[RMDB]
RNA sequence: GGGAACGACUCGAGUAGAGUCGAAAAGCAUGUUAAUCAUCAAUGCGCUGAUAUGAGAGAGCAGGACUUUCAACGGCAGCGCAUACACGAUGCUGAAUGACGUCGGCGGCAGCGACUUUUUCAGAAUCUCUCAUUCCAGAUUCGUCUGGAAUGAGAGAAAAGAAACAACAACAACAAC
Reactivity to DMS in 0.01 (KOAc 150mM, MgCl2 10mM, bicine 150mM(pH8.5), 24C), signal-to-noise 1, nucleotides 027 to 126: g050c070a070u000g000u000u030a040a130u040c040a000u000c140a140a050u000g000c000g060c000u030g000a000u060a140u070g050a240g000a000g000a080g000c010a020g000g000a300c060u000u000u000c000a000a200c120g030g010c000a000g040c000g000c020a050u000a020c240a010c110g020a000u020g000c000u000g000a090a100u000g030a270c010g000u000c000g020g050c120g000g000c000a030g020c000g000a020c060u000u000u000u000u000c020a070g000a190a160u010
Reactivity to 2A3 in 0.01 (KOAc 150mM, MgCl2 10mM, bicine 150mM(pH8.5), 24C), signal-to-noise 4, nucleotides 027 to 126: g030c020a030u120g040u140u250a100a050u140c050a010u020c010a050a050u030g000c010g000c000u020g010a030u040a060u270g020a040g000a000g010a020g050c050a100g070g090a120c020u010u050u000c020a100a040c050g060g000c010a000g020c020g000c000a000u030a020c040a020c040g030a030u030g030c010u010g020a050a050u060g030a030c070g020u010c020g060g050c020g040g040c040a030g010c050g010a050c000u150u070u000u020u020c030a060g030a050a090u000